[RMDB]
RNA sequence: GGGAACGACUCGAGUAGAGUCGAAAAGUUGCCCGAGAAGAGAUCACACAGAUGAGACACAAGGAGCGAUGUCUCAUCACUUGGUUUACGACAAGUGACGAGUCGUUCCCAAAAUCGCUCCAAUGAACUUACUGUUUACUUUCGAGUAAACAGUAAGAAAAGAAACAACAACAACAAC
Reactivity to 2A3 in 0.01 (KOAc 150mM, MgCl2 10mM, bicine 150mM(pH8.5), 24C), signal-to-noise 3, nucleotides 027 to 126: g080u080u070g100c000c000c000g010a070g010a040a040g100a010g030a080u110c050a030c010a010c020a140g010a030u030g000a010g000a010c000a000c020a090a170g010g000a010g000c000g000a000u000g000u000c000u000c000a000u000c000a000c000u010u020g020g020u060u090u140a080c050g010a010c020a090a110g050u060g190a050c000g000a000g000u000c000g000u010u000c000c000c000a030a010a000a000u000c010g000c000u000c010c010a000a060u140g020a020a010
Reactivity to DMS in 0.01 (KOAc 150mM, MgCl2 10mM, bicine 150mM(pH8.5), 24C), signal-to-noise 6, nucleotides 027 to 126: g020u010u000g000c040c010c010g010a130g010a130a100g000a080g010a050u000c050a080c190a120c180a140g000a030u000g010a010g010a010c000a020c140a080a060g000g000a010g010c010g010a050u000g000u000c000u010c000a020u000c000a050c060u000u000g000g010u000u000u010a100c100g010a070c040a060a060g010u000g010a130c040g000a010g010u000c000g000u000u000c010c020c000a020a000a040a020u000c020g010c010u000c000c010a130a080u010g010a090a130

Notes:
Structure probing data (2A3 and DMS) for a 177-nucleotide construct. Conditions: 150 mM KOAc, 10 mM MgCl2 and 150 mM bicine (pH 8.5), 24 C.